[RMDB]
RNA sequence: GGGAACGACUCGAGUAGAGUCGAAAAGAUAUGGACAGACUCCCCACCUUUAUUAGCGUUGAAAUGAACUGCCUAUCGGAAACGAUAGGCAGUUCAUGGAGCUAAAUAAAGAGGUCUGUCCUAAGUCGAAUUAUUAGGGGUUCGCCCCUAAUAAUUCAAAAGAAACAACAACAACAAC
Reactivity to DMS in 0.01 (KOAc 150mM, MgCl2 10mM, bicine 150mM(pH8.5), 24C), signal-to-noise 2, nucleotides 027 to 126: g000a190u010a120u010g000g000a030c020a010g030a010c000u000c240c010c000c040a300c180c000u000u000u000a020u000u000a010g010c000g010u020u030g000a160a200a000u000g000a020a020c000u010g020c000c000u000a020u000c020g010g030a140a090a200c000g020a000u000a010g010g010c000a000g000u000u000c010a010u000g040g000a080g010c010u000a010a020a030u010a010a040a010g020a200g040g000u000c000u010g000u000c000c000u000a010a050g010u000c210

The record gives the reactivity of an RNA of 177 nucleotides to DMS. The reactions ran in a buffer of 150 mM KOAc, 10 mM MgCl2 and 150 mM bicine (pH 8.5), at 24 C. For DMS, 1,323 sequencing reads were counted.